[RMDB]
RNA sequence: GGGAACGACUCGAGUAGAGUCGAAAAGCUACCACUGCUGUAGGUAGUUGUAUAAAGAGUGUAGUGCGGCAUCUAGGUGUUACUAAAGGCAUAUUGACAGGCUGUUUUAGUUUUGCCAAGAUGUUAUGAUUUUAUUCAUGUUCGCAUGAAUAAAAUCAAAAGAAACAACAACAACAAC
Reactivity to DMS in 0.01 (KOAc 150mM, MgCl2 10mM, bicine 150mM(pH8.5), 24C), signal-to-noise 5, nucleotides 027 to 126: g010c010u000a010c010c010a080c040u000g030c160u010g010u000a080g010g000u000a000g000u000u010g010u000a090u020a090a050a090g010a080g020u000g010u000a020g020u000g020c100g020g000c020a010u000c020u000a090g020g020u000g000u000u000a020c030u000a020a030a070g010g000c000a030u000a290u000u010g000a120c250a090g000g000c020u000g010u010u000u010u000a020g000u000u010u000u000g000c000c010a090a030g000a020u000g010u000u000a060u010
Reactivity to 2A3 in 0.01 (KOAc 150mM, MgCl2 10mM, bicine 150mM(pH8.5), 24C), signal-to-noise 3, nucleotides 027 to 126: g000c000u010a010c000c010a020c070u170g030c080u180g120u120a060g040g010u000a010g020u010u040g090u010a250u090a020a110a010g130a050g020u070g000u100a050g040u060g120c050g040g000c000a010u010c000u010a030g020g010u000g030u040u000a010c010u010a020a020a000g020g010c020a040u080a100u210u190g120a060c090a080g100g000c030u020g050u040u040u020u010a010g000u000u010u040u090g000c000c000a010a010g010a010u030g010u060u050a100u080
Source: RMDB library 15KREP, as collected in RNAgym. This 177-nucleotide RNA was probed chemically with DMS and 2A3. The DMS profile rests on 6,295 reads. The RNA was probed in 150 mM KOAc, 10 mM MgCl2 and 150 mM bicine (pH 8.5) at 24 C. For 2A3 the reverse transcriptase was SuperScript II with manganese. Reactivities are given for positions 27 through 126. For DMS the reverse transcriptase was MarathonRT.